[RMDB]
RNA sequence: GGGAACGACUCGAGUAGAGUCGAAAAGAUAUGGAGGUUCAGUCUUCGAAGAACUAGCUCGGAAACGAGCUAGGGAGAAGGCUGACGGCCUCCUAAGUCAAAAGCAAGCUCCUUCGGGAGCUUGCAAGUAACGGACUAGGUUCGCCUAGUCCGUUACAAAAGAAACAACAACAACAAC
Reactivity to DMS in 0.01 (KOAc 150mM, MgCl2 10mM, bicine 150mM(pH8.5), 24C), signal-to-noise 1, nucleotides 027 to 126: g000a060u030a300u030g000g000a000g020g020u020u020c010a010g060u000c000u000u000c000g000a040a180g020a260a300c000u000a000g080c020u000c000g030g000a100a180a220c030g000a010g000c000u000a020g000g000g000a060g020a000a000g000g000c000u000g010a030c300g010g030c000c010u000c000c020u000a010a140g030u000c030a080a070a090a180g000c000a030a050g000c000u000c010c000u000u000c280g030g000g040a010g010c000u000u050g000c000a030a030
An RNA of 177 nucleotides, treated with DMS and read out base by base. For DMS the reverse transcriptase was MarathonRT. Conditions: 150 mM KOAc, 10 mM MgCl2 and 150 mM bicine (pH 8.5), 24 C. Values cover nucleotides 27 to 126. The data come from the RNA Mapping Database (RMDB), library TTRDES.